[RMDB]
RNA sequence: GGGAACGACUCGAGUAGAGUCGAAAAAACUAAAAUUGAUGGAUACCAGACUAAUUUUGCUACGACGUUAUCCUGAGGAUCUCUUUUUCGGUAGCUCUGCUAGUGUAGACGUCAUACACCUGGUAUCUCACUUUCCAUGGUUCGCCAUGGAAAGUGAAAAAGAAACAACAACAACAAC
Reactivity to 2A3 in 0.01 (KOAc 150mM, MgCl2 10mM, bicine 150mM(pH8.5), 24C), signal-to-noise 2, nucleotides 027 to 126: a000a000c140u170a070a050a070a090u150u190g030a050u150g060g020a010u020a030c000c010a000g010a020c150u150a150a240u170u190u090u230g030c070u090a010c000g010a000c030g000u000u010a060u220c060c060u050g000a050g030g060a050u020c000u000c000u120u160u020u080u130c080g120g020u170a000g000c040u030c010u030g000c040u080a030g000u010g000u150a030g010a080c010g000u030c000a030u060a100c050a010c010c000u000g040g000u040a020u030c000
Reactivity to DMS in 0.01 (KOAc 150mM, MgCl2 10mM, bicine 150mM(pH8.5), 24C), signal-to-noise 2, nucleotides 027 to 126: a050a080c060u010a050a050a080a040u010u000g010a110u010g010g020a030u000a010c020c010a020g000a150c170u040a060a110u010u000u000u010g020c170u000a020c050g020a040c050g000u000u010a130u020c040c010u010g010a300g000g000a040u010c060u000c000u000u000u010u010u010c160g020g020u010a020g010c090u000c020u000g000c050u000a040g020u010g020u000a140g010a020c060g000u000c010a050u000a020c120a080c190c010u000g010g000u000a000u000c020